[RMDB]
RNA sequence: GGGAACGACUCGAGUAGAGUCGAAAAUCGUCAAAAAUGGAGUACAUGAUGCCGCCCGCUUUUGACAACGCGUUGCCGGAGUGUGGCCAGAUGAUGACGUUAGAUUCAUCGGUAAAGCGGCGGCCGUUACGUUAAUACCUUUCGAGGUAUUAACGUAAAAAGAAACAACAACAACAAC
Reactivity to DMS in 0.01 (KOAc 150mM, MgCl2 10mM, bicine 150mM(pH8.5), 24C), signal-to-noise 6, nucleotides 027 to 126: u020c080g010u010c050a020a020a050a070a050u020g010g000a160g010u010a100c110a060u010g000a120u010g010c010c010g020c070c030c040g010c020u000u000u000u000g010a030c040a090a080c050g020c070g010u010u010g020c050c020g000g010a180g020u010g010u010g000g010c010c020a140g020a020u010g000a010u000g000a180c200g010u010u030a080g010a120u000u000c000a000u000c000g010g010u010a030a030a040g020c010g010g000c010g010g010c000c080g000u000
Reactivity to 2A3 in 0.01 (KOAc 150mM, MgCl2 10mM, bicine 150mM(pH8.5), 24C), signal-to-noise 7, nucleotides 027 to 126: u090c010g070u030c020a040a020a030a040a040u190g080g020a080g080u150a070c060a120u130g050a080u100g090c010c000g060c050c040c030g000c010u010u020u020u080g060a040c050a060a030c060g040c030g100u070u140g060c050c020g060g040a100g020u100g010u050g040g000c030c050a070g010a060u030g000a000u010g020a010c160g040u100u050a030g000a130u010u030c000a000u010c000g010g010u050a010a020a000g000c000g000g000c000g000g000c000c000g000u010
The data come from the RNA Mapping Database (RMDB), libraries RFM100 and RFMREP. This 177-nucleotide RNA was probed chemically with DMS and 2A3. 2A3 adducts were read by reverse transcription with SuperScript II with manganese.